[RMDB]
RNA sequence: GGGAACGACUCGAGUAGAGUCGAAAACGGCGAAUUCGUUCGCCGAAAAAAGCGUACUACUUAGAGGGACCGGGAGAGGCGAUCCCAAAUAGGAUCGACCUCGACGAUCGGUCCUACCCACCUAAGUAUCGCAAAAAGCUACUGUUCGCAGUAGCAAACGGUCUGCAAUAUUCGUAUUGCAGACCGUAAAAGAAACAACAACAACAAC
Reactivity to 2A3 in 0.01 (KOAc 150mM, MgCl2 10mM, bicine 150mM(pH8.5), 24C), signal-to-noise 1, nucleotides 027 to 156: c010g000g020c010g000a060a010u110u040c130g090u130u020c000g000c010c000g150a040a000a000a010a000a000g000c000g060u080a070c000u010a000c010u010u010a000g020a010g020g000g000a000c010c000g020g010g000a010g000a000g000g000c010g000a010u000c050c020c060a060a300a300u060a070g000g000a000u000c000g230a300c000c000u020c000g000a000c000g000a030u010c000g000g000u030c000c000u000a000c000c030c000a070c000c000u000a000a020g010u000a000u300c020g010c050a000a070a140a000a000g000c000u020a000c010u000g040u120u170c210g000c190a000g000u000a000g000c010a020a020